Chemical mapping of a 207-nucleotide RNA with 2A3. The reactions ran in a buffer of 150 mM KOAc, 10 mM MgCl2 and 150 mM bicine (pH 8.5), at 24 C. 2A3 is a SHAPE reagent: it acylates the 2'-hydroxyl of flexible nucleotides of all four kinds. Values cover nucleotides 27 to 156. For 2A3 the reverse transcriptase was SuperScript II with manganese.
RNA sequence: GGGAACGACUCGAGUAGAGUCGAAAAUGGUACACUGUGUUUCUGUAGUCCAAUGAGCUGGGUUCCAAACUACCUCCUUUUGCCUGUUACAUACAGCUUUGUGUUCCAGUGGAUGAUACUGUUCCUUAACUCUUAAAGAGUGGACAUACGAAACAGAAUGGUACGUGACUUUCGAGUCACGUACCAUAAAAGAAACAACAACAACAAC
Reactivity to 2A3 in 0.01 (KOAc 150mM, MgCl2 10mM, bicine 150mM(pH8.5), 24C), signal-to-noise 1, nucleotides 027 to 156: u030g040g000u100a060c030a000c100u090g010u010g010u150u050u040c080u050g090u040a040g000u000c000c100a170a090u080g000a000g040c050u010g000g060g050u040u090c090c100a050a140a050c140u190a130c040c030u080c040c050u000u120u060u000g040c080c040u000g010u080u010a030c010a030u100a030c020a090g000c010u020u060u050g020u000g000u040u040c010c000a020g000u040g010g000a000u000g000a010u060a100c060u040g020u070u000c000c000u000u160a070a000c000u010c020u130u250a100a180a090g020a010g000u080g000g000a020c020a060u100a040c080g080a090a060a000c000a000g110a080